Annotation: Chemical mapping of a 177-nucleotide RNA with DMS and 2A3. DMS adducts were read by reverse transcription with MarathonRT. The reactions ran in a buffer of 150 mM KOAc, 10 mM MgCl2 and 150 mM bicine (pH 8.5), at 24 C. Values cover nucleotides 27 to 126. Source: RMDB libraries RFM100 and RFMREP, as collected in RNAgym.

RNA sequence: GGGAACGACUCGAGUAGAGUCGAAAAUGUGCGGGUUAAUUUGACUCAACGCGGGAAAACUUACCCGGGCAGGCGAUUGUUGUGAGAAGGAAUACCUGAUGAUAUCGCGCGUGGUGCAUGGCCGUUCCUACAUUCCAGAAUUCGUUCUGGAAUGUAGAAAAGAAACAACAACAACAAC
Reactivity to DMS in 0.01 (KOAc 150mM, MgCl2 10mM, bicine 150mM(pH8.5), 24C), signal-to-noise 7, nucleotides 027 to 126: u020g020u000g010c030g000g000g010u010u010a030a080u010u010u000g000a210c030u000c030a100a120c140g000c070g000g010g000a080a050a060a060c100u000u010a080c030c010c000g000g000g020c030a060g000g010c040g000a050u010u010g010u000u000g000u000g000a090g020a090a080g000g000a150a080u010a080c040c010u000g010a070u010g010a070u010a070u000c030g010c040g010c050g000u010g000g020u000g010c050a060u010g010g020c020c020g000u000u000c050
Reactivity to 2A3 in 0.01 (KOAc 150mM, MgCl2 10mM, bicine 150mM(pH8.5), 24C), signal-to-noise 7, nucleotides 027 to 126: u110g010u060g090c020g000g010g010u030u080a050a060u060u070u090g080a060c010u010c070a100a110c150g000c090g090g030g000a020a070a030a040c040u060u070a040c010c000c000g000g020g000c030a030g020g010c030g060a080u010u060g030u030u020g010u040g050a080g060a100a040g070g040a070a060u090a170c000c010u050g020a050u070g020a030u070a020u150c030g010c010g000c020g070u070g020g000u030g010c030a050u030g030g000c020c010g020u030u020c010